Structure probing data (DMS) for a 177-nucleotide construct. The reactions ran in a buffer of 150 mM KOAc, 10 mM MgCl2 and 150 mM bicine (pH 8.5), at 24 C. Reactivities are given for positions 27 through 126. The data come from the RNA Mapping Database (RMDB), library TTRINS.

[RMDB]
RNA sequence: GGGAACGACUCGAGUAGAGUCGAAAAGAUAUGGAUCAGGAUCUGUGCAAAAGUCGUCGAUAAGAGGCGGUCGGAAACGACCGGCCUCUUUUGACGACGUCGCUGCACAGAUCCUGAUCCUAAGUCAUCAGAAGAUGUAGUUCGCUACAUCUUCUGAAAAAGAAACAACAACAACAAC
Reactivity to DMS in 0.01 (KOAc 150mM, MgCl2 10mM, bicine 150mM(pH8.5), 24C), signal-to-noise 1, nucleotides 027 to 126: g000a050u020a300u010g010g010a000u000c000a000g030g000a010u000c000u000g010u000g000c000a030a130a140a290g010u000c000g000u000c000g000a040u020a010a000g000a030g010g000c000g020g000u000c000g000g010a100a070a190c020g010a040c000c000g020g030c010c010u000c000u000u000u000u010g010a030c020g000a010c000g010u000c260g000c300u000g000c000a010c000a000g000a000u000c000c000u000g010a000u000c000c000u000a010a060g020u010c020a140